[RMDB]
RNA sequence: GGGAACGACUCGAGUAGAGUCGAAAAAAGAAAAUGAAGGACAGUGGUGUCACAAGUGUGAUCAACAAGCACCCUAAAGCAACGUGGACACUCUGCAAAGUCGCAUUUAACACCGAGCUCGCACUCACUCCUACGUUAGGUUCGCCUAACGUAGGAGAAAAGAAACAACAACAACAAC
Reactivity to 2A3 in 0.01 (KOAc 150mM, MgCl2 10mM, bicine 150mM(pH8.5), 24C), signal-to-noise 2, nucleotides 027 to 126: a000a010g160a020a060a010a020u150g050a060a020g060g010a010c010a020g020u070g060g040u020g040u010c010a020c010a160a160g010u000g040u000g080a070u090c040a040a090c040a120a030g030c010a020c010c050c000u090a130a130a010g030c040a010a060c090g050u070g010g010a010c020a000c050u030c050u050g010c050a080a030a030g030u040c030g000c050a070u010u120u060a090a070c060a000c010c020g010a000g000c010u040c040g020c000a030c010u030c020a040
Reactivity to DMS in 0.01 (KOAc 150mM, MgCl2 10mM, bicine 150mM(pH8.5), 24C), signal-to-noise 2, nucleotides 027 to 126: a040a060g000a070a010a020a090u000g010a150a060g000g000a080c050a080g010u010g000g010u000g020u000c010a070c120a110a070g010u000g000u010g020a060u040c070a110a080c240a060a130g000c030a050c010c080c040u000a050a160a100g000c080a060a080c170g030u010g010g000a020c030a010c040u010c020u000g020c070a060a000a060g010u000c000g020c050a020u010u020u000a070a090c070a090c030c020g010a100g000c050u000c130g000c120a100c030u000c080a210
Chemical mapping of a 177-nucleotide RNA with 2A3 and DMS.
2A3 adducts were read by reverse transcription with SuperScript II with manganese.
For DMS, 1,077 sequencing reads were counted.